[RMDB]
RNA sequence: GGGAACGACUCGAGUAGAGUCGAAAAAUUGCAGCCUGCAGUAACGAGCAUUGAUUAUGAGGAAAUCGGCGCCGAAUCCGAACUCGACGUUGAUACUGAACGAUGGCUAACUGACGAAAGCUUGGCGACGUUGAAGCAGUUGCGGAUGCCUGCCAUCCUAGUACGGGCUAUUCGUAGCCCGUACUAGAAAAGAAACAACAACAACAAC
Reactivity to 2A3 in 0.01 (KOAc 150mM, MgCl2 10mM, bicine 150mM(pH8.5), 24C), signal-to-noise 3, nucleotides 027 to 156: a000u150u110g010c030a040g050c000c020u020g000c010a070g050u070a080a010c090g000a040g060c040a020u020u130g030a040u080u290a080u180g030a070g020g040a060a130a030u040c010g010g000c000g000c030c000g030a040a060u060c130c050g010a040a050c040u000c030g040a010c020g000u010u020g060a050u100a230c030u040g020a050a030c050g020a050u030g030g000c020u020a100a040c040u070g070a040c050g070a180a000a020g040c040u050u060g040g030c040g000a050c010g060u040u120g050a070a020g000c000a000g000u050u000g000c000g070g010a040u030g010c000c010u020g000c000c000a010u020c010
Reactivity to DMS in 0.01 (KOAc 150mM, MgCl2 10mM, bicine 150mM(pH8.5), 24C), signal-to-noise 2, nucleotides 027 to 156: a110u000u000g000c030a110g050c010c020u000g020c090a110g000u000a030a080c010g020a080g040c020a070u000u000g020a130u010u000a140u000g020a260g020g000a060a140a070u000c000g030g000c000g050c080c000g000a070a090u020c090c110g000a100a090c140u010c000g000a030c060g010u000u020g020a050u000a160c160u000g000a020a050c060g050a070u000g010g020c000u020a060a120c040u000g010a080c010g000a100a050a120g010c070u000u010g050g030c040g010a060c040g020u030u000g030a090a140g020c050a130g000u010u000g000c000g020g000a100u000g010c000c040u000g040c040c000a140u000c010

About this RNA
Source: RMDB library OK3TST, as collected in RNAgym. The record gives the reactivity of an RNA of 207 nucleotides to 2A3 and DMS. For 2A3 the reverse transcriptase was SuperScript II with manganese. The DMS profile rests on 2,887 reads.